[RMDB]
RNA sequence: GGGAACGACUCGAGUAGAGUCGAAAAGAUAUGGAUCCUGUAGGGAGCUGAUCGGAAACGAUACCAGCGAAGAACUACACGGGAUCCUAAGUCAAAAGUUACAGAUGGCUUCGGCCAUCUGUAACAAGAGUAUAAUCACGUUCGCGUGAUUAUACUCAAAAGAAACAACAACAACAAC
Reactivity to DMS in 0.01 (KOAc 150mM, MgCl2 10mM, bicine 150mM(pH8.5), 24C), signal-to-noise 5, nucleotides 027 to 126: g000a050u000a300u010g000g010a010u000c000c000u000g010u000a010g000g010g000a090g010c010u010g010a040u000c000g000g000a100a060a190c010g020a030u000a110c300c030a000g000c010g000a090a120g010a110a160c000u010a010c030a070c220g030g000g000a010u000c000c000u000a010a080g010u020c040a090a070a120a120g000u000u000a000c000a020g000a000u000g000g010c010u000u010c240g010g010c000c010a000u000c000u000g000u000a000a000c000a060a070
Reactivity to 2A3 in 0.01 (KOAc 150mM, MgCl2 10mM, bicine 150mM(pH8.5), 24C), signal-to-noise 5, nucleotides 027 to 126: g030a010u070a040u170g000g000a010u000c010c020u060g010u020a010g020g020g040a040g000c010u010g010a010u010c010g000g030a080a060a020c020g000a010u070a250c180c010a010g000c030g030a160a010g020a040a020c020u040a020c080a100c190g090g000g000a000u000c000c000u010a100a010g040u020c030a020a030a070a170g000u000u010a000c000a000g010a010u000g000g010c010u110u180c300g030g000c000c000a000u000c000u000g000u010a000a000c000a000a000

Conditions: 150 mM KOAc, 10 mM MgCl2 and 150 mM bicine (pH 8.5), 24 C. Structure probing data (DMS and 2A3) for a 177-nucleotide construct. For 2A3 the reverse transcriptase was SuperScript II with manganese. Source: RMDB library TTRDEL, as collected in RNAgym. For 2A3, 12,666 sequencing reads were counted. The DMS profile rests on 5,893 reads.